[RMDB]
RNA sequence: GGGAACGACUCGAGUAGAGUCGAAAAAAGAUGUUGUUCUACAAGGCUUAAAAGCUUGUUGUUACGUGGGUGUGCAAACUGUUGAAGAUCUGCGUGCUCGCAUGACAUAUGUAUGCCAGUGUGGUGGGUAAAAUGCAUACUUCGGUAUGCAUUUUACAAAAGAAACAACAACAACAAC
Reactivity to DMS in 0.01 (KOAc 150mM, MgCl2 10mM, bicine 150mM(pH8.5), 24C), signal-to-noise 3, nucleotides 027 to 126: a090a090g000a120u010g010u020u000g010u010u010c030u000a060c060a160a050g030g000c000u000u000a070a070a110a170g020c050u010u000g000u010u000g010u000u010a020c100g020u000g010g010g010u010g000u000g000c020a030a010a090c030u000g010u000u010g000a190a060g000a120u000c100u000g000c000g020u000g010c010u000c020g020c000a050u010g000a020c010a010u000a040u000g010u000a090u010g020c010c020a110g020u010g010u010g010g030u010g010g010
Reactivity to 2A3 in 0.01 (KOAc 150mM, MgCl2 10mM, bicine 150mM(pH8.5), 24C), signal-to-noise 2, nucleotides 027 to 126: a000a000g090a040u050g000u020u000g000u000u000c000u000a020c020a040a030g020g060c010u150u270a060a080a020a050g050c000u020u060g080u070u010g000u000u020a010c010g010u020g000g040g030u020g000u010g000c000a000a030a070c020u070g080u180u200g110a070a030g000a110u010c010u040g000c010g010u000g010c010u010c010g000c010a010u060g000a000c000a010u040a010u090g060u050a030u110g010c010c030a110g060u030g030u040g090g060u060g030g120